[RMDB]
This 177-nucleotide RNA was probed chemically with DMS and 2A3. Values cover nucleotides 27 to 126. It was measured as part of the RMDB library OK2TST. High 2A3 reactivity points to a flexible backbone, as in loops and unpaired stretches. For DMS the reverse transcriptase was MarathonRT.
RNA sequence: GGGAACGACUCGAGUAGAGUCGAAAAGCGCAGAGUGUUUGACAAGAUCGCCGACGAGCAUCGGCGAACCAUUGCCAUCCACAAGCUCAUUACGGGUCAUGACGAUCUGCUUGCUGACAACCCGGCAGAUGAUCAUGCCUUUCGAGGCAUGAUCAUCAAAAGAAACAACAACAACAAC
Reactivity to DMS in 0.01 (KOAc 150mM, MgCl2 10mM, bicine 150mM(pH8.5), 24C), signal-to-noise 2, nucleotides 027 to 126: g020c010g000c000a020g020a140g020u000g030u000u000u010g000a020c040a040a040g000a050u000c010g020c000c000g010a060c070g020a210g040c270a250u000c020g020g030c010g000a010a030c170c070a100u000u010g000c000c000a000u000c040c000a010c060a060a130g020c070u000c050a090u020u000a140c100g000g000g010u000c090a090u000g000a080c150g000a300u000c020u000g000c040u000u010g010c050u000g000a120c230a060a090c020c010c030g000g010c190a070
Reactivity to 2A3 in 0.01 (KOAc 150mM, MgCl2 10mM, bicine 150mM(pH8.5), 24C), signal-to-noise 2, nucleotides 027 to 126: g020c050g000c050a010g020a000g050u030g040u040u050u000g040a040c030a040a030g030a060u010c000g000c020c000g000a030c050g110a030g110c050a110u010c000g000g010c000g000a000a000c020c000a150u040u070g020c030c000a010u010c000c000a020c000a030a020g000c000u000c000a030u040u170a050c100g090g030g060u090c060a040u070g040a020c010g050a040u020c010u010g000c040u080u090g000c000u010g000a020c030a050a110c010c000c000g010g050c030a010